[RMDB]
RNA sequence: GGGAACGACUCGAGUAGAGUCGAAAAAAUAAGUUAAUACUGGAGCGAGAAUAAUUUAAAUCAUUUCAUCAUAACCCAUAGCUGAAUGAACUUUGACUACUCCUAAACAAAGUAGUAACAAUUUUCACCGAUGAUAAGUAUUCGUACUUAUCAUCGGAAAAGAAACAACAACAACAAC
Reactivity to DMS in 0.01 (KOAc 150mM, MgCl2 10mM, bicine 150mM(pH8.5), 24C), signal-to-noise 3, nucleotides 027 to 126: a070a030u020a030a080g010u010u010a030a060u000a060c040u020g000g000a070g000c050g000a070g000a090a060u020a040a040u040u020u010a040a050a110u010c030a020u010u020u020c020a030u000c040a030u010a090a090c070c030c030a080u010a080g020c060u000g000a030a060u000g000a040a010c140u000u010u010g020a140c010u000a040c000u000c000c010u010a050a060a090c300a080a140a020g000u000a000g000u000a040a030c080a020a050u000u000u000u000c040a160
Reactivity to 2A3 in 0.01 (KOAc 150mM, MgCl2 10mM, bicine 150mM(pH8.5), 24C), signal-to-noise 6, nucleotides 027 to 126: a000a000u210a040a010g030u040u050a040a010u050a120c040u050g010g000a030g030c070g040a030g050a090a070u180a110a080u070u130u240a130a140a050u080c010a020u020u130u050c020a050u010c010a030u050a120a090c030c010c000a040u080a060g040c070u060g070a060a040u030g010a030a060c060u050u060u040g010a010c000u020a020c000u020c000c040u060a050a050a010c040a050a090a000g000u000a000g010u060a010a030c040a040a040u020u030u050u070c070a050